[RMDB]
RNA sequence: GGGAACGACUCGAGUAGAGUCGAAAAAGGUAGGAAUAGCAGAUAUCUGAUGUUUGUGUUGAAAAGGGAUUUUGCAUAUAAACUGGAGUCUUUGAGAAGAGUGAGCAAUAGAUACUUUAAAAGAAUGUAACAGUUCAAUUUUCGAAUUGAACUGUUAAAAAGAAACAACAACAACAAC
Reactivity to DMS in 0.01 (KOAc 150mM, MgCl2 10mM, bicine 150mM(pH8.5), 24C), signal-to-noise 5, nucleotides 027 to 126: a060g000g010u010a050g010g010a070a090u000a070g020c060a050g010a090u010a050u000c050u010g010a080u000g000u000u000u000g030u000g010u000u000g000a040a050a070a090g010g000g010a120u000u000u010u010g010c060a040u000a080u000a040a050a060c090u010g000g000a060g010u000c030u000u000u000g000a120g000a060a080g010a100g020u000g000a070g000c050a040a050u010a060g010a100u000a050c060u010u000u010a060a040a070a120g010a080a050u010g010
Reactivity to 2A3 in 0.01 (KOAc 150mM, MgCl2 10mM, bicine 150mM(pH8.5), 24C), signal-to-noise 2, nucleotides 027 to 126: a010g060g000u020a000g010g040a040a040u020a100g050c010a010g050a060u080a080u140c060u110g050a090u040g110u010u080u090g040u010g030u060u100g050a020a060a000a000g030g000g000a010u050u050u080u090g000c030a000u080a010u030a150a110a020c030u040g030g000a010g040u000c000u040u080u080g050a050g030a060a010g000a010g040u020g030a010g010c020a000a030u000a040g040a010u030a060c020u090u080u080a030a260a010a020g080a070a050u160g000
About this RNA
Chemical mapping of a 177-nucleotide RNA with DMS and 2A3. DMS adducts were read by reverse transcription with MarathonRT. The reactions ran in a buffer of 150 mM KOAc, 10 mM MgCl2 and 150 mM bicine (pH 8.5), at 24 C.